This 207-nucleotide RNA was probed chemically with DMS and 2A3. Source: RMDB library ARCHII, as collected in RNAgym. The RNA was probed in 150 mM KOAc, 10 mM MgCl2 and 150 mM bicine (pH 8.5) at 24 C. Reactivities are given for positions 27 through 156. DMS adducts were read by reverse transcription with MarathonRT. For DMS, 4,137 sequencing reads were counted.
[RMDB]
RNA sequence: GGGAACGACUCGAGUAGAGUCGAAAAUUGUCACUAUCCCCAGGAUGUGGAAGGCGCGUCCAUCUCAAACCAGGAGUCGACAUUGGGACAUUGUCGUAAGACACUGUACCGAGGUCACUAAGGAAUGGUGAACUGCCCCAGGCUGGAUAACAGAGCAGAUAUCCUAAGGGUUCGCCCUUAGGAUAUCAAAAGAAACAACAACAACAAC
Reactivity to DMS in 0.01 (KOAc 150mM, MgCl2 10mM, bicine 150mM(pH8.5), 24C), signal-to-noise 2, nucleotides 027 to 156: u010u000g010u010c030a130c050u000a060u000c010c010c010c050a190g010g010a070u010g000u020g020g030a130a160g030g020c020g010c030g010u000c050c010a090u050c060u000c050a050a090a140c020c030a070g040g000a120g020u010c040g040a030c010a130u000u000g010g010g000a020c010a040u000u000g020u000c030g040u010a140a220g000a040c000a010c150u010g020u010a000c030c020g020a010g020g030u000c000a180c070u000a070a090g010g000a060a080u000g010g000u010g010a020a100c050u010g020c040c030c020c030a090g000g030c030u000g000g010a100u000a040a120c080a120g000a150g010c080a210
Reactivity to 2A3 in 0.01 (KOAc 150mM, MgCl2 10mM, bicine 150mM(pH8.5), 24C), signal-to-noise 3, nucleotides 027 to 156: u040u050g110u040c020a010c090u110a100u130c010c000c010c010a040g020g010a060u030g020u080g100g050a120a070g080g010c030g010c030g050u000c030c020a080u060c110u030c060a150a160a140c030c020a040g050g070a040g100u130c120g040a010c010a050u020u050g000g000g030a010c010a010u010u030g000u000c000g050u120a080a050g000a020c010a000c020u010g000u010a040c000c000g000a000g020g000u000c000a000c020u060a050a080g050g020a070a030u060g040g000u030g030a060a050c020u040g020c010c020c010c010a030g090g000c000u030g040g010a030u050a160a080c040a020g050a020g070c050a010